[RMDB]
RNA sequence: GGGAACGACUCGAGUAGAGUCGAAAAGCUUCGCCGCAGGUCUAGGAAGCGGUGAAUGAAACUGCGACUGCCCUCCCGGGCCAUGAGUUCGUCGUAGCGUUUUACCAAUUCCAAAAAGUCGUCCGACGUACUCGGACUAUUUCGAUAGUCCGAGUACAAAAGAAACAACAACAACAAC
Reactivity to DMS in 0.01 (KOAc 150mM, MgCl2 10mM, bicine 150mM(pH8.5), 24C), signal-to-noise 3, nucleotides 027 to 126: g000c030u000u000c020g040c060c030g000c040a160g020g010u010c150u000a170g000g000a070a050g000c300g000g010u010g000a040a030u030g000a130a030a150c040u000g010c000g000a040c000u000g000c030c000c000u030c150c070c180g040g030g000c000c060a040u010g020a110g000u030u000c130g030u010c030g000u010a030g000c040g000u000u000u000u000a110c000c010a040a300u000u000c010c020a070a070a180a100a050g000u000c030g020u000c010c040g000a110c180
Reactivity to 2A3 in 0.01 (KOAc 150mM, MgCl2 10mM, bicine 150mM(pH8.5), 24C), signal-to-noise 7, nucleotides 027 to 126: g020c020u050u050c020g020c030c000g020c030a030g050g060u050c060u120a060g060g050a060a010g000c020g000g010u020g040a020a020u080g010a080a070a000c010u010g000c000g010a010c010u050g010c000c000c000u110c030c070c030g000g000g010c040c020a230u270g040a060g150u180u250c080g000u000c010g000u010a010g010c020g040u030u020u030u060a060c040c020a050a080u070u030c010c000a030a120a000a000a030g060u060c030g030u010c010c020g030a050c090
The record gives the reactivity of an RNA of 177 nucleotides to DMS and 2A3. For DMS the reverse transcriptase was MarathonRT. The DMS profile rests on 3,284 reads.